[RMDB]
RNA sequence: GGGAACGACUCGAGUAGAGUCGAAAACCGCGGUUCUUCCUCGACUCGGAACGGCUCAUCUCGACAAGAGGCGGCAGUCCUCAGUACUCUUACUCUUUUCUGUAAAGAGGAGACUGCUGGACUCGCCGCCCGAGUUCGAGCCAUGAGCCAGGUCCGACUGGUGUAAGGUCUUCGGACCUUACACCAGAAAAGAAACAACAACAACAAC
Reactivity to 2A3 in 0.01 (KOAc 150mM, MgCl2 10mM, bicine 150mM(pH8.5), 24C), signal-to-noise 2, nucleotides 027 to 156: c020c000g000c050g060g020u110u050c040u060u050c010c030u060c080g070a030c010u020c010g000g000a040a020c010g000g020c010u020c020a300u170c050u000c000g010a010c010a080a030g140a190g040g000c000g000g000c000a000g000u010c010c000u010c000a080g030u200a300c030u000c030u030u110a260c020u010c010u050u220u080u100c130u300g300u300a020a010a020g000a000g000g010a010g000a000c000u020g040c110u020g000g000a000c000u030c090g000c000c000g000c000c000c000g000a000g040u110u020c000g000a000g000c000c000a000u010g000a000g060c020c000a000g000g040u000c000c000g000a000
An RNA of 207 nucleotides, treated with 2A3 and read out base by base. The data come from the RNA Mapping Database (RMDB), library VIROID. Reactivities are given for positions 27 through 156.